This 177-nucleotide RNA was probed chemically with DMS and 2A3. DMS adducts were read by reverse transcription with MarathonRT. Conditions: 150 mM KOAc, 10 mM MgCl2 and 150 mM bicine (pH 8.5), 24 C.

RNA sequence: GGGAACGACUCGAGUAGAGUCGAAAAUCGUCUUAAUUCGUUAAGACGAACUCACGGAUUGUGUCCGUAAUCACAGAAAUAAAAUAAAACUAAGAAAAUAAAAUCAUCUCAUGUUCGCAUGAGAUAAUAACUUCGUAUAAUUCGUUAUACGAAGUUAAAAAGAAACAACAACAACAAC
Reactivity to DMS in 0.01 (KOAc 150mM, MgCl2 10mM, bicine 150mM(pH8.5), 24C), signal-to-noise 1, nucleotides 027 to 126: u000c000g010u000c000u000u000a000a010u010u010c210g060u000u000a000a000g020a010c030g010a050a150c060u010c020a300c000g010g000a050u000u000g000u000g010u000c000c000g010u010a030a030u000c010a040c000a030g000a080a110a140u000a070a060a060a110u010a020a020a060a110c100u000a040a140g000a110a030a070a030u020a050a080a070a090u020c050a040u010c000u000c000a030u000g010u000u000c210g010c000a000u000g000a000g010a020u000a010a060
Reactivity to 2A3 in 0.01 (KOAc 150mM, MgCl2 10mM, bicine 150mM(pH8.5), 24C), signal-to-noise 2, nucleotides 027 to 126: u000c000g000u000c000u020u020a050a010u090u050c080g050u010u000a000a000g000a000c000g000a030a030c030u000c000a030c000g030g040a180u060u040g030u050g090u110c010c000g060u060a040a130u130c010a020c010a000g190a060a200a050u200a050a190a050a080u270a130a260a240a000c010u140a300a060g060a090a210a120a050u270a030a160a020a030u140c000a020u000c000u010c000a010u040g030u080u110c200g000c050a000u000g000a000g000a010u000a000a030